This 177-nucleotide RNA was probed chemically with 2A3 and DMS. It was measured as part of the RMDB library OK1LIB. The DMS profile rests on 1,328 reads. High 2A3 reactivity points to a flexible backbone, as in loops and unpaired stretches. DMS adducts were read by reverse transcription with MarathonRT.
[RMDB]
RNA sequence: GGGAACGACUCGAGUAGAGUCGAAAAUCGUUUUGGGCCGCAUGAUGCAAACGAGUGUCGCGAUGGUUAAGGAAGGGUGGUUUCGUGGUGAAGUCGCAUCUCACGGCAUGUAUGAACUACUCCAAGCAGGGGAUUAAAUCUUCGGAUUUAAUCCCCUAAAAGAAACAACAACAACAAC
Reactivity to 2A3 in 0.01 (KOAc 150mM, MgCl2 10mM, bicine 150mM(pH8.5), 24C), signal-to-noise 1, nucleotides 027 to 126: u070c040g020u030u040u020u030g060g070g000c110c050g040c000a000u130g030a020u000g110c000a010a010a010c070g060a080g070u020g000u100c000g070c130g160a080u020g140g000u050u070a070a000g000g020a070a010g050g000g020u000g030g000u030u170u080c000g020u040g020g000u040g000a000a000g030u000c000g000c030a030u000c000u000c000a000c000g000g000c020a030u090g080u090a150u030g070a130a040c000u120a000c000u030c000c110a060a000g000c080
Reactivity to DMS in 0.01 (KOAc 150mM, MgCl2 10mM, bicine 150mM(pH8.5), 24C), signal-to-noise 1, nucleotides 027 to 126: u050c010g000u000u000u020u020g040g030g040c080c110g000c000a180u060g050a110u000g020c070a080a020a040c140g000a090g010u000g000u000c030g020c020g040a040u070g000g040u000u030a060a120g000g000a160a140g100g020g010u050g010g050u000u000u040c000g000u000g020g070u000g000a100a140g030u010c120g000c070a070u000c140u000c110a130c000g030g010c100a040u010g000u010a150u040g030a040a040c050u040a010c000u030c010c210a010a110g070c090